[RMDB]
RNA sequence: GGGAACGACUCGAGUAGAGUCGAAAAAGCGAUGAUACGUCAUCGCAACGAUUGCCUGAUCGUAAAACAGGAGACGGCCGUGGCCGGGACCACGUAAAAAAGCGUAACGUGGUCUACGGACCACGAAAAAAGCGCGGAACGUUCGCGUUCCGCGCAACAGUAAAUGGUUCUUCGGAACCAUUUACUGAAAAGAAACAACAACAACAAC
Reactivity to 2A3 in 0.01 (KOAc 150mM, MgCl2 10mM, bicine 150mM(pH8.5), 24C), signal-to-noise 1, nucleotides 027 to 156: a000g000c000g010a000u000g020a000u010a120c210g050u020c010a000u010c000g000c010a010a000c010g010a010u000u000g020c010c010u010g020a010u010c050g120u180a020a030a000a000c010a010g040g000a010g110a060c180g080g060c150c000g000u000g010g000c000c000g000g000g000a000c000c000a000c000g000u050a000a050a030a090a050a020g170c070g110u150a070a030c010g000u010g000g000u010c000u070a140c000g000g010a100c000c000a000c000g000a020a000a000a000a000a000g010c000g000c000g000g010a000a010c010g000u100u120c190g010c000g110u020u000c020c020g000c020g000c000a000a000
An RNA of 207 nucleotides, treated with 2A3 and read out base by base. The reactions ran in a buffer of 150 mM KOAc, 10 mM MgCl2 and 150 mM bicine (pH 8.5), at 24 C. Values cover nucleotides 27 to 156. For 2A3 the reverse transcriptase was SuperScript II with manganese. For 2A3, 1,050 sequencing reads were counted.